Source: RMDB library M2RFPK, as collected in RNAgym. An RNA of 207 nucleotides, treated with DMS and 2A3 and read out base by base. Values cover nucleotides 27 to 156. In probing experiments dimethyl sulfate is read out at A N1 and C N3, which are open when not base-paired. The RNA was probed in 150 mM KOAc, 10 mM MgCl2 and 150 mM bicine (pH 8.5) at 24 C. As a SHAPE reagent, 2A3 marks flexible, mostly unpaired nucleotides at the ribose 2'-OH.

[RMDB]
RNA sequence: GGGAACGACUCGAGUAGAGUCGAAAAGCUUCCUCUUGGCGCGGAGGUUUAACUGAGCUCGCUCCCCAUAUCGGUGUGGGCGCACCGGAUUUACAAAUUAAAGUCCUUUAGGGAGCGGAAAGGGACAAAAACUUGCACGUGUUCGCACGUGCAAGAACUUCUUAAGCAGGUUCGCCUGCUUAAGAAGAAAAGAAACAACAACAACAAC
Reactivity to DMS in 0.01 (KOAc 150mM, MgCl2 10mM, bicine 150mM(pH8.5), 24C), signal-to-noise 1, nucleotides 027 to 156: g030c060u000u010c010c000u000c020u000u010g030g000c070g100c110g000g010a040g010g020u000u010u000a060a140c050u000g000a090g000c060u020c010g030c010u010c030c000c000c080a170u000a110u000c010g000g040u020g030u000g020g000g000c140g020c000a020c020c010g000g020a170u010u000u000a220c110a050a070a170u000u010a080a110a090g030u000c020c060u000u000u010a040g010g020g010a040g030c020g040g020a030a050a130g000g020g000a140c100a060a000a080a190a190c000u000u030g010c000a010c000g020u000g000u000u010c300g080c010a000c000g050u000g000c010a010a000g000a020a070
Reactivity to 2A3 in 0.01 (KOAc 150mM, MgCl2 10mM, bicine 150mM(pH8.5), 24C), signal-to-noise 2, nucleotides 027 to 156: g020c020u060u010c000c010u020c010u020u080g090g000c070g010c030g030g020a040g020g080u050u110u070a030a020c030u030g040a010g020c020u010c020g000c010u020c010c010c000c000a050u090a080u130c010g000g000u000g000u020g000g030g010c040g000c000a000c000c000g020g000a020u180u290u070a140c240a040a040a020u130u240a070a120a010g000u010c000c010u010u020u020a020g000g010g000a010g030c030g000g000a040a030a010g070g000g030a020c100a030a130a000a030a070c000u000u000g000c020a000c000g000u010g030u040u050c090g030c070a000c000g010u010g000c000a000a000g000a000a000